Source: RMDB library RFMREP, as collected in RNAgym. Chemical mapping of a 177-nucleotide RNA with DMS and 2A3. For 2A3 the reverse transcriptase was SuperScript II with manganese.
[RMDB]
RNA sequence: GGGAACGACUCGAGUAGAGUCGAAAAGGCCCAAACUUAGUAGCCCCAAGUGGGUAAAAGGCAUGGUUAUUCAAAACCGUUCAAAGCAUACGACGCUCGUCGUUAGGUUUUGCUUUGAACGGUCGCACAUUAGAAGGUACUUCGGUACCUUCUAAUGAAAAGAAACAACAACAACAAC
Reactivity to DMS in 0.01 (KOAc 150mM, MgCl2 10mM, bicine 150mM(pH8.5), 24C), signal-to-noise 6, nucleotides 027 to 126: g010g010c010c000c300a100a110a090c030u010u000a060g010u000a130g010c010c010c000c040a090a150g030u010g020g000g010u000a000a040a170a230g010g000c080a180u000g020g000u000u010a090u010u000c090a070a090a090a040c000c000g000u000u000c000a000a010a010g000c000a030u000a030c010g000a010c000g010c050u010c270g020u010c000g000u000u000a030g030g010u000u000u000u000g010c000u010u000u000g000a000a010c000g000g010u000c050g020c160a160
Reactivity to 2A3 in 0.01 (KOAc 150mM, MgCl2 10mM, bicine 150mM(pH8.5), 24C), signal-to-noise 5, nucleotides 027 to 126: g120g000c000c000c000a030a010a000c020u040u020a030g030u030a020g120c010c000c000c080a280a090g070u300g110g000g010u010a010a020a000a010g010g000c030a040u170g080g080u150u170a110u180u190c070a040a050a070a070c000c000g000u000u000c000a000a000a000g000c000a010u010a020c000g010a000c000g060c080u170c150g300u080c000g020u060u030a150g000g080u070u130u070u070g000c000u010u000u010g000a000a000c000g000g000u000c000g000c000a070

The reactions ran in a buffer of 150 mM KOAc, 10 mM MgCl2 and 150 mM bicine (pH 8.5), at 24 C. DMS (dimethyl sulfate) methylates the pairing face of unpaired adenines and cytosines.